RNA sequence: GGGAACGACUCGAGUAGAGUCGAAAAGGUUUAGGUACAGUUGAUGAAGAUUAUAAACGUUGUACUGGUGGUUACGACAUAGCAGACUUGGUGUGUGCUCAAUAUUACAAUGGCAUCAUGGUUCUACCAGGUGUAGCUAAUGCUGACAAGAUGACUACAAAGGGGAAAGAUUCGUCUUUCCCCUUUGAAAAGAAACAACAACAACAAC
Reactivity to DMS in 0.01 (KOAc 150mM, MgCl2 10mM, bicine 150mM(pH8.5), 24C), signal-to-noise 4, nucleotides 027 to 156: g010g010u000u010u000a050g020g020u000a050c020a070g020u010u010g020a090u000g010a060a080g010a120u000u000a170u010a090a090a120c110g020u000u000g010u000a040c040u000g010g020u000g010g020u000u010a080c050g050a060c040a080u000a070g030c050a100g020a070c050u000u010g010g030u000g010u010g000u000g010c030u000c060a080a110u010a070u010u010a070c060a060a090u000g000g010c020a050u000c050a080u000g030g000u000u000c050u000a050c030c030a060g010g020u000g020u000a060g020c030u000a030a070u010g010c030u000g010a090c050a060a060g000a130u000g010a070c050u000a140
Reactivity to 2A3 in 0.01 (KOAc 150mM, MgCl2 10mM, bicine 150mM(pH8.5), 24C), signal-to-noise 2, nucleotides 027 to 156: g070g000u010u030u040a000g000g000u010a040c000a020g000u020u020g020a000u010g000a050a030g010a050u130u060a030u080a060a180a000c040g000u010u000g020u000a060c010u020g010g000u000g000g010u020u050a020c010g020a010c040a010u060a040g030c040a010g010a150c010u030u040g050g000u020g010u020g000u000g020c020u060c060a070a050u100a040u070u000a060c060a010a080u070g000g000c010a020u060c000a080u010g020g010u050u030c010u040a020c000c000a000g000g000u020g020u030a000g010c000u030a040a060u020g000c010u040g030a010c010a000a070g040a050u050g000a000c030u000a010
An RNA of 207 nucleotides, treated with DMS and 2A3 and read out base by base. The data come from the RNA Mapping Database (RMDB), library OK3TST. Values cover nucleotides 27 to 156. The 2A3 profile rests on 1,437 reads. The reactions ran in a buffer of 150 mM KOAc, 10 mM MgCl2 and 150 mM bicine (pH 8.5), at 24 C.